[RMDB]
An RNA of 177 nucleotides, treated with DMS and 2A3 and read out base by base.
The RNA was probed in 150 mM KOAc, 10 mM MgCl2 and 150 mM bicine (pH 8.5) at 24 C.
RNA sequence: GGGAACGACUCGAGUAGAGUCGAAAACUUCUUACCAUUGCGGAAAGUACUGGCGAAUCCUUACUUUCUUCACCUACACCAAGUGAGGCUAAGUAAUCUAAUGUUUGUGCCCCAACGCCUUCGGUAAACUGCACGAUAGUUUCGACUAUCGUGCAGUAAAAGAAACAACAACAACAAC
Reactivity to DMS in 0.01 (KOAc 150mM, MgCl2 10mM, bicine 150mM(pH8.5), 24C), signal-to-noise 2, nucleotides 027 to 126: c070u010u000c060u000u000a010c030c010a140u000u000g000c090g010g000a110a120a070g050u000a040c120u000g000g000c030g000a140a100u000c040c040u040u000a010c010u020u000u000c010u000u000c010a020c010c030u000a090c110a120c150c220a060a080g000u000g000a060g000g010c090u010a020a080g010u000a040a040u010c060u000a100a050u000g010u000u010u000g000u000g020c040c000c040c050a040a100c050g000c020c040u010u010c150g000g000u010a010a050
Reactivity to 2A3 in 0.01 (KOAc 150mM, MgCl2 10mM, bicine 150mM(pH8.5), 24C), signal-to-noise 1, nucleotides 027 to 126: c000u040u030c020u020u060a000c000c030a040u000u100g000c030g020g070a140a020a000g040u040a000c040u070g040g000c050g060a060a040u050c020c000u080u080a040c030u000u040u040c000u000u000c010a010c000c050u140a150c080a070c070c000a100a010g010u040g000a000g020g000c050u000a060a000g010u000a150a000u140c020u100a190a070u180g040u030u050u090g090u010g010c040c000c020c040a030a040c000g000c030c000u020u070c030g000g010u020a150a060
For 2A3 the reverse transcriptase was SuperScript II with manganese. For DMS, 1,163 sequencing reads were counted. It was measured as part of the RMDB library OK2TST. High DMS reactivity at an A or C suggests that its Watson-Crick edge is free.